[RMDB]
RNA sequence: GGGAACGACUCGAGUAGAGUCGAAAAUCUAAGUGUCUAAUGAUGAGUUUCAUAGGGCAGAUUCUGAGAUGAAAAUUUACUUCAUCAUUGAUACUCCUACUAUGAAAUCUGAAGACACUUGAAAACCUUGUGCAGAUGGAUUCGUCCAUCUGCACAAAAAAGAAACAACAACAACAAC
Reactivity to DMS in 0.01 (KOAc 150mM, MgCl2 10mM, bicine 150mM(pH8.5), 24C), signal-to-noise 2, nucleotides 027 to 126: u000c010u020a000a010g000u000g030u000c000u000a140a220u010g000a150u010g000a070g030u010u000u000c000a000u000a000g000g010g030c230a040g010a300u010u010c000u000g010a100g030a010u000g000a000a010a070a160u030u050u170a110c210u000u000c010a000u000c010a050u000u000g000a020u010a220c020u000c150c000u000a140c010u000a090u000g000a010a000a030u000c000u000g000a060a020g030a000c000a030c000u000u000g000a010a070a080a130c070c000
Reactivity to 2A3 in 0.01 (KOAc 150mM, MgCl2 10mM, bicine 150mM(pH8.5), 24C), signal-to-noise 3, nucleotides 027 to 126: u120c050u050a000a000g000u000g010u000c000u010a230a070u120g090a010u040g060a050g180u040u070u020c000a010u000a000g000g000g030c110a020g020a050u130u000c020u060g050a050g000a130u020g040a020a030a040a080u160u230u120a100c060u010u000c000a000u000c010a040u020u130g000a010u050a130c000u000c000c020u120a300c010u010a000u000g020a000a010a040u020c020u000g010a010a010g000a000c010a000c000u000u000g010a000a000a010a000c000c000

An RNA of 177 nucleotides, treated with DMS and 2A3 and read out base by base. Conditions: 150 mM KOAc, 10 mM MgCl2 and 150 mM bicine (pH 8.5), 24 C. Source: RMDB library RFM100, as collected in RNAgym.